[RMDB]
RNA sequence: GGGAACGACUCGAGUAGAGUCGAAAAAUACACCAGCAGUAGGACUGAGCGACCGUCACAACAAGGUUGUGCUGGUAUCCGACGGUCGUAUAGCCCUGUCUUGCAGGUUGCCUUGCACUGACGUGCCACACCAUUUACAGAUUCGUCUGUAAAUGAAUCUACGUAUCCAGUUCGCUGGAUACGUAGAAAAAGAAACAACAACAACAAC
Reactivity to DMS in 0.01 (KOAc 150mM, MgCl2 10mM, bicine 150mM(pH8.5), 24C), signal-to-noise 2, nucleotides 027 to 156: a080u000a100c070a230c020c020a100g010c000a050g010u000a040g010g010a050c020u000g010a150g000c000g010a030c000c000g010u010c010a140c080a080a110c050a090a110g010g010u000u010g050u000g050c020u000g030g010u010a040u000c080c020g040a040c010g040g000u000c030g000u000a050u000a030g000c020c000c000u010g020u000c040u000u010g040c030a140g030g000u010u000g000c010c150u000u000g000c030a050c040u010g010a090c130g000u000g040c000c040a090c060a140c050c020a050u000u000u010a010c010a000g000a070u000u000c300g010u000c010u000g000u010a000a010a000u000g000a030a130
Reactivity to 2A3 in 0.01 (KOAc 150mM, MgCl2 10mM, bicine 150mM(pH8.5), 24C), signal-to-noise 4, nucleotides 027 to 156: a010u160a010c070a010c020c000a010g000c010a020g020u050a010g030g020a030c050u070g070a030g080c000g000a000c010c000g000u010c020a040c030a080a150c060a130a130g120g010u050u030g060u120g040c040u050g020g050u010a090u060c020c050g010a000c000g000g000u000c010g000u020a060u130a060g000c010c000c000u020g080u080c040u020u100g020c010a030g000g050u080u090g050c040c000u040u070g020c020a040c030u170g080a050c110g030u020g020c020c000a070c010a000c030c000a000u000u000u010a000c000a000g000a020u020u140c150g060u010c070u000g010u010a000a000a000u000g000a000a050

An RNA of 207 nucleotides, treated with DMS and 2A3 and read out base by base. For DMS the reverse transcriptase was MarathonRT.